Description
The record gives the reactivity of an RNA of 207 nucleotides to 2A3.
[RMDB]
RNA sequence: GGGAACGACUCGAGUAGAGUCGAAAAACUCUCAUCAUCUAGUCUUUCUACUUCAUUUGGUUGUCCUUCUGUCUCUGGCUCUUUACGAGUACCUUCCUAUGAUAUGAAGAUAAAUGAUUCUUGCAAAGCUAUAGAUAUUCAUUCAGAGAAACCAUCAGGGUACUAGGUAUUUCGAUACCUAGUACCCAAAAGAAACAACAACAACAAC
Reactivity to 2A3 in 0.01 (KOAc 150mM, MgCl2 10mM, bicine 150mM(pH8.5), 24C), signal-to-noise 2, nucleotides 027 to 156: a000c020u010c000u010c040a060u000c010a060u000c050u020a010g010u050c000u020u060u010c010u080a180c020u050u090c020a140u040u090u160g070g000u080u060g040u060c020c010u040u040c010u040g100u000c000u000c010u090g000g060c000u010c040u020u090u110a070c050g040a040g000u020a060c000c000u020u020c030c010u050a070u120g040a030u030a080u140g030a020a030g030a010u140a030a050a000u060g010a060u060u000c000u020u060g020c050a080a040a070g000c030u100a020u070a170g040a040u050a070u140u120c050a000u050u040c020a010g030a040g030a080a020a030c080c020a010u300c030a050
The 2A3 profile rests on 837 reads.
The RNA was probed in 150 mM KOAc, 10 mM MgCl2 and 150 mM bicine (pH 8.5) at 24 C.
It was measured as part of the RMDB library OK3TST.